[RMDB]
RNA sequence: GGGAACGACUCGAGUAGAGUCGAAAAGAUAUGGACUCCAGGUACGCUUCGAAGAACUCGGAAACGAGGGAGAAGGUACUGGAGUCCUAAGUCAAAACAUUUCUUGCCGUUCGCGGCAAGAAAUGAACACUAUGGUGCAGUUCGCUGCACCAUAGUGAAAAGAAACAACAACAACAAC
Reactivity to 2A3 in 0.01 (KOAc 150mM, MgCl2 10mM, bicine 150mM(pH8.5), 24C), signal-to-noise 4, nucleotides 027 to 126: g010a030u060a050u130g000g000a000c000u010c000c000a030g120g140u040a010c290g130c300u000u020c030g300a300a090g030a060a030c010u000c000g000g010a090a060a040c000g000a010g010g000g000a020g000a000a000g020g000u000a000c000u000g000g010a010g000u000c000c000u000a010a010g000u000c010a000a000a030a120c000a000u000u000u000c000u000u010g010c050c000g050u030u050c300g010c010g140g000c000a000a000g000a000a000a000u010g000a000a000
Reactivity to DMS in 0.01 (KOAc 150mM, MgCl2 10mM, bicine 150mM(pH8.5), 24C), signal-to-noise 4, nucleotides 027 to 126: g000a040u000a300u000g000g010a010c000u000c000c000a020g000g010u000a010c000g020c000u000u000c010g010a080a200g010a120a160c010u000c000g010g000a120a130a200c000g000a030g000g000g010a090g000a030a000g020g000u000a010c000u000g000g000a010g000u000c000c000u000a010a060g000u000c030a100a050a100a190c010a010u000u000u000c000u000u000g010c010c000g000u000u020c260g020c000g000g010c000a000a000g000a000a000a000u000g010a080a170
Description
An RNA of 177 nucleotides, treated with 2A3 and DMS and read out base by base. For 2A3, 8,309 sequencing reads were counted. Conditions: 150 mM KOAc, 10 mM MgCl2 and 150 mM bicine (pH 8.5), 24 C. The DMS profile rests on 4,605 reads.